[RMDB]
RNA sequence: GGGAACGACUCGAGUAGAGUCGAAAAAGAUCAACGAAUGUCGAAAGGAGCAGCCGUUCAUGAUCGAUAUUUCCUAUGAUAUGCCAUUCGAGGAGGAGCCUGAGCCCAGAGAUGACCAGGAGGCUCAGAGUCUUGUUUGAUUCGUCAAACAAGACUCAAAAGAAACAACAACAACAAC
Reactivity to 2A3 in 0.01 (KOAc 150mM, MgCl2 10mM, bicine 150mM(pH8.5), 24C), signal-to-noise 2, nucleotides 027 to 126: a000g010a010u030c020a030a090c080g040a020a030u040g030u070c040g120a190a070a070g120g040a080g040c030a010g050c040c020g030u030u040c040a070u090g010a020u020c030g010a000u010a110u160u060u010c000c000u050a150u070g070a060u060a040u160g010c050c060a060u010u100c040g040a050g020g010a040g010g030a040g010c000c010u030g010a010g000c000c030c000a020g020a000g020a080u120g020a040c020c030a020g020g090a040g030g030c020u000c030a020
Reactivity to DMS in 0.01 (KOAc 150mM, MgCl2 10mM, bicine 150mM(pH8.5), 24C), signal-to-noise 3, nucleotides 027 to 126: a130g000a070u000c050a040a120c200g000a050a010u000g000u000c110g010a080a120a100g010g000a050g060c040a110g010c080c040g000u000u000c030a050u010g030a050u000c020g010a150u000a100u010u000u000c010c020u000a090u020g010a050u000a060u000g000c030c030a060u010u000c080g000a100g010g000a100g010g000a090g020c080c030u000g000a030g000c000c020c010a110g020a160g000a060u010g020a110c090c060a070g000g000a100g000g000c030u000c040a050
The record gives the reactivity of an RNA of 177 nucleotides to 2A3 and DMS. DMS adducts were read by reverse transcription with MarathonRT. Values cover nucleotides 27 to 126. High DMS reactivity at an A or C suggests that its Watson-Crick edge is free. Conditions: 150 mM KOAc, 10 mM MgCl2 and 150 mM bicine (pH 8.5), 24 C.